[RMDB]
RNA sequence: GGGAACGACUCGAGUAGAGUCGAAAAUAGAGCAUAUCGGCGCGAAUUGACAUUACCCAGAAUUAUACAUCAUAUCGACACUCAAACAGAGAAUAUCCACUCACCGCAUAUACAGAGAGUCGAGGCGAGUGCCGCGGAGUUCAGAUGUGACUCUGAGACACACUUCUUUUUUCGAAAAGAAGUGUGUAAAAGAAACAACAACAACAAC
Reactivity to 2A3 in 0.01 (KOAc 150mM, MgCl2 10mM, bicine 150mM(pH8.5), 24C), signal-to-noise 4, nucleotides 027 to 156: u140a000g020a020g030c040a030u060a040u150c070g040g000c010g010c010g060a050a110u110u120g020a070c060a090u060u100a070c000c010c020a040g060a040a050u200u090a090u050a190c060a100u080c030a020u060a020u200c020g020a010c020a010c040u040c020a020a110a100c070a050g020a000g060a200a050u110a080u140c040c010a030c040u030c030a010c080c030g020c130a020u160a020u060a230c060a030g040a000g000a010g090u030c010g000a010g000g040c040g020a020g050u020g000c030c010g000c020g020g010a060g020u060u040c020a020g020a140u090g070u020g030a040c000u000c000u030g050a030g050
Reactivity to DMS in 0.01 (KOAc 150mM, MgCl2 10mM, bicine 150mM(pH8.5), 24C), signal-to-noise 2, nucleotides 027 to 156: u010a130g010a060g000c050a060u000a110u000c040g030g010c040g040c020g000a080a120u000u010g020a090c030a100u010u000a140c030c010c020a190g000a130a110u010u000a100u010a140c070a050u000c050a070u000a110u000c010g000a020c020a050c000u000c000a130a060a180c090a120g000a080g000a050a110u010a100u000c030c010a040c030u000c050a050c020c020g000c040a130u000a110u000a120c130a100g000a100g010a050g020u010c050g000a050g030g030c040g000a040g040u000g030c000c020g040c050g050g000a050g010u010u000c040a100g000a100u000g030u000g010a040c040u000c020u020g010a190g010
An RNA of 207 nucleotides, treated with 2A3 and DMS and read out base by base. 2A3 adducts were read by reverse transcription with SuperScript II with manganese. For DMS, 4,502 sequencing reads were counted. DMS adducts were read by reverse transcription with MarathonRT.